[RMDB]
RNA sequence: GGGAACGACUCGAGUAGAGUCGAAAAAUUGGAACUGUAGGCAAAUCCGCAGAUCUAGCUGAAACAUGAGUGAUAACCGCGUCUUCGGACAAGGGAAGUUGCCUAAUCAUGCUCCCAAGAAAAACUUACAAUGCGUAAACUUCGGUUUACGCAUUGUAAAAGAAACAACAACAACAAC
Reactivity to DMS in 0.01 (KOAc 150mM, MgCl2 10mM, bicine 150mM(pH8.5), 24C), signal-to-noise 2, nucleotides 027 to 126: a200u020u020g000g040a040a110c000u000g000u010a060g040g000c190a100a110a070u000c010c020g000c000a040g000a020u000c000u000a210g000c000u000g000a050a090a170c220a130u050g000a090g020u000g050a000u000a010a300c000c060g000c300g000u000c010u000u020c090g040g020a000c040a100a300g000g060g030a000a090g030u000u000g010c070c020u000a060a130u000c000a000u000g000c020u010c000c000c000a160a020g000a010a090a020a030a090c080u000u000
Reactivity to 2A3 in 0.01 (KOAc 150mM, MgCl2 10mM, bicine 150mM(pH8.5), 24C), signal-to-noise 4, nucleotides 027 to 126: a010u040u050g030g010a050a040c020u040g030u100a220g080g000c110a060a050a160u180c010c000g000c050a010g000a040u000c010u020a030g010c000u010g040a130a120a010c060a140u140g000a080g080u050g040a030u020a070a010c000c000g000c000g010u000c000u000u100c220g060g010a000c000a000a020g000g000g000a040a100g010u000u020g000c000c000u010a000a020u040c010a000u060g000c000u020c020c000c010a000a000g110a030a080a010a000a000c000u000u000
This 177-nucleotide RNA was probed chemically with DMS and 2A3. The reactions ran in a buffer of 150 mM KOAc, 10 mM MgCl2 and 150 mM bicine (pH 8.5), at 24 C. The data come from the RNA Mapping Database (RMDB), library RFM100. Reactivities are given for positions 27 through 126. 2A3 adducts were read by reverse transcription with SuperScript II with manganese. 2A3 is a SHAPE reagent: it acylates the 2'-hydroxyl of flexible nucleotides of all four kinds. High DMS reactivity at an A or C suggests that its Watson-Crick edge is free. For DMS, 1,408 sequencing reads were counted.